[RMDB]
RNA sequence: GGGAACGACUCGAGUAGAGUCGAAAACUCUGAAGGCAUGAUCACCCCGUCCGAUGCGGAAGUUCGUACUUCCGUCGAACGCGAAAGUCGGACGGCGGCCAUGAGUCGCAACGCAAAGCCGCGGCAAUAAGCUCGUCGUCGUUCGCGACGACGAGAAGAACACCUCUAGGUUCGCCUAGAGGUGUUCAAAAGAAACAACAACAACAAC
Reactivity to 2A3 in 0.01 (KOAc 150mM, MgCl2 10mM, bicine 150mM(pH8.5), 24C), signal-to-noise 1, nucleotides 027 to 156: c040u000c060u060g130a170a020g010g000c000a010u030g010a030u080c030a070c000c000c000c000g000u000c000c000g000a000u020g010c020g030g000a010a010g010u100u300c110g050u220a020c030u000u010c000c000g000u010c010g030a140a050c060g010c060g160a140a130a000g010u000c000g020g000a000c000g000g020c000g000g010c030c000a020u030g010a000g010u000c000g030c040a000a040c100g000c170a100a100a050g010c040c020g000c010g010g000c010a010a090u110a170a000g060c000u010c000g000u000c000g010u000c000g030u030u000c180g000c010g120a000c000g000a000c010g000a000g000a010a010
Chemical mapping of a 207-nucleotide RNA with 2A3. 2A3 adducts were read by reverse transcription with SuperScript II with manganese. Values cover nucleotides 27 to 156. Source: RMDB library M2RFPK, as collected in RNAgym.